Structure probing data (DMS and 2A3) for a 177-nucleotide construct. Values cover nucleotides 27 to 126.
RNA sequence: GGGAACGACUCGAGUAGAGUCGAAAAGCGAUCAAUAAUAAGUCGACCACUCGAAAGAGUCGCAUGGAAACAUGCCUACUAAUGCGUCCAAUGUAGUUCGACGAUUAGGACGCAGAAGAUCGCGAAAAAUAAUGGUAUAGUUCGCUAUACCAUUAUUAAAAGAAACAACAACAACAAC
Reactivity to DMS in 0.01 (KOAc 150mM, MgCl2 10mM, bicine 150mM(pH8.5), 24C), signal-to-noise 9, nucleotides 027 to 126: g000c000g010a000u000c000a160a100u040a090a090u020a100a160g000u000c000g010a060c300c300a070c010u000c000g000a130a100a140g000a010g000u000c240g010c000a010u000g000g000a160a090a150c010a000u000g010c060c080u000a030c040u010a090a100u010g000c010g010u010c000c000a100a070u030g010u010a030g000u010u010c060g010a030c020g010a100u010u010a120g000g000a010c000g010c000a040g010a090a090g000a000u000c010g010c000g000a010a060a060
Reactivity to 2A3 in 0.01 (KOAc 150mM, MgCl2 10mM, bicine 150mM(pH8.5), 24C), signal-to-noise 9, nucleotides 027 to 126: g010c000g010a010u020c030a040a040u130a200a030u110a150a030g030u010c010g010a050c020c060a020c020u000c010g040a090a060a060g010a010g010u020c020g000c000a000u000g000g010a030a040a020c000a000u010g000c010c010u030a050c020u050a050a070u070g000c000g000u000c010c010a030a070u160g030u070a070g070u080u170c090g070a040c010g000a040u020u050a050g000g000a000c000g000c000a000g000a030a010g000a000u020c010g000c010g090a080a030a010
It was measured as part of the RMDB library OK1LIB. For DMS the reverse transcriptase was MarathonRT. 2A3 adducts were read by reverse transcription with SuperScript II with manganese. High 2A3 reactivity points to a flexible backbone, as in loops and unpaired stretches.